[RMDB]
RNA sequence: GGGAACGACUCGAGUAGAGUCGAAAAGAUAUGGAUCCCUCCAGGCGAAGAACUACUGGGUCGGAAACGACCUGUAGGGAGCCUUAAGGGAUCCUAAGUCAAACCGUGCUUGUUCGCAAGCACGGAAGCUACCAGUAUCGUUCGCGAUACUGGUAGCAAAAGAAACAACAACAACAAC
Reactivity to 2A3 in 0.01 (KOAc 150mM, MgCl2 10mM, bicine 150mM(pH8.5), 24C), signal-to-noise 2, nucleotides 027 to 126: g010a010u020a000u050g000g000a000u010c020c000c010u010c080c120a010g010g030c010g260a300a150g000a140a140c010u040a010c080u300g070g030g000u010c010g020g000a020a010a010c000g000a010c000c050u000g000u010a010g000g030g000a050g020c000c000u000u000a010a020g030g000g000a000u000c000c000u000a020a010g000u010c040a080a050a090c010c000g020u010g010c010u080u000g060u160u060c280g050c110a020a000g010c010a000c010g000g000a000a030
Reactivity to DMS in 0.01 (KOAc 150mM, MgCl2 10mM, bicine 150mM(pH8.5), 24C), signal-to-noise 2, nucleotides 027 to 126: g000a020u010a100u000g000g000a010u000c010c000c000u010c140c280a030g030g050c030g030a160a170g000a190a260c010u000a000c020u020g010g000g050u000c000g020g010a020a010a080c050g000a000c010c010u000g020u020a000g000g000g010a090g020c000c000u020u000a020a000g020g030g020a000u000c000c000u000a000a080g000u010c000a150a100a250c000c000g020u000g000c000u000u000g010u000u010c190g020c020a010a020g020c000a000c000g000g000a030a050